[RMDB]
RNA sequence: GGGAACGACUCGAGUAGAGUCGAAAAUCUUCAGCUAUGGACUGUAUCAAAGUUUAUGGGCUAUAAUUGUAUUUUGGUUUCUGCCAGGCAUCAGGAUAGCUCAUUUGCAUGACUGGUACAAAAUUUACUUAUUCAGUGAAUCAUGCUCAGCUGCUGACGAUAGCGAUUACUUCGGUAAUCGCUAUCGAAAAGAAACAACAACAACAAC
Reactivity to DMS in 0.01 (KOAc 150mM, MgCl2 10mM, bicine 150mM(pH8.5), 24C), signal-to-noise 1, nucleotides 027 to 156: u000c060u000u020c030a060g040c010u000a080u000g030g020a100c060u010g020u000a090u000c030a080a140a300g000u000u000u000a050u000g000g030g030c040u000a050u000a040a090u000u000g010u010a140u010u000u010u000g000g010u000u010u000c240u030g020c000c000a040g010g000c060a070u010c020a070g020g000a090u000a070g060c040u010c010a090u000u000u000g000c040a100u000g010a030c030u000g000g010u000a030c070a070a030a070a080u000u010u000a020c040u000u000a170u000u000c090a070g050u000g030a010a020u000c040a060u010g000c030u000c040a090g020c050u000g000c010u010g020a180
Reactivity to 2A3 in 0.01 (KOAc 150mM, MgCl2 10mM, bicine 150mM(pH8.5), 24C), signal-to-noise 4, nucleotides 027 to 156: u040c000u040u050c010a010g000c020u090a090u160g040g020a040c030u020g000u040a060u080c030a100a140a040g000u030u050u060a000u000g000g000g000c010u010a000u030a050a220u080u030g060u080a080u040u130u040u030g010g070u060u300u150c170u250g000c010c000a000g020g010c030a070u060c050a060g130g010a020u000a010g010c000u010c020a010u030u030u040g010c010a030u050g060a100c090u050g010g000u000a020c010a000a100a050a030u080u110u030a030c020u100u220a140u300u160c060a030g010u010g040a030a020u070c060a050u140g020c030u020c070a060g010c030u020g000c000u020g010a010